This 177-nucleotide RNA was probed chemically with 2A3 and DMS. Conditions: 150 mM KOAc, 10 mM MgCl2 and 150 mM bicine (pH 8.5), 24 C. The data come from the RNA Mapping Database (RMDB), library OK2TST. For DMS, 17,699 sequencing reads were counted.

RNA sequence: GGGAACGACUCGAGUAGAGUCGAAAAUGCUGGGGUUGCUGCGCAGGCGUCUGGCCGAUCUCGGCACGGCGAAGAAACUGGCCAUCGGUUUUACCCUGGUCCUGCUAUUGACCGCGCUGGUGGCCGAAAAAUUUACUGAUUUCGAUCAGUAAAUUUUAAAAGAAACAACAACAACAAC
Reactivity to 2A3 in 0.01 (KOAc 150mM, MgCl2 10mM, bicine 150mM(pH8.5), 24C), signal-to-noise 4, nucleotides 027 to 126: u110g010c010u030g000g030g030g060u060u070g060c110u040g030c160g000c060a050g150g090c060g110u070c060u070g020g000c010c010g040a100u060c100u070c070g000g000c010a020c020g020g000c030g040a060a040g070a080a150a010c090u070g000g000c020c000a010u020c020g010g070u010u130u180u200a090c030c020c000u020g020g010u050c010c030u060g110c030u090a100u170u140g020a020c010c010g040c000g020c010u010g000g020u000g000g000c010c010g010a010
Reactivity to DMS in 0.01 (KOAc 150mM, MgCl2 10mM, bicine 150mM(pH8.5), 24C), signal-to-noise 8, nucleotides 027 to 126: u000g020c020u000g010g000g010g010u010u000g010c070u010g010c070g020c080a070g010g020c170g010u010c040u000g010g000c010c010g000a090u010c120u000c020g000g020c030a040c080g010g010c050g010a090a090g000a070a080a090c150u010g010g010c010c010a020u000c030g010g010u000u010u000u000a130c060c040c060u010g020g010u000c010c180u010g010c150u010a140u000u000g000a050c020c010g020c200g000c020u000g010g030u000g000g010c000c010g000a010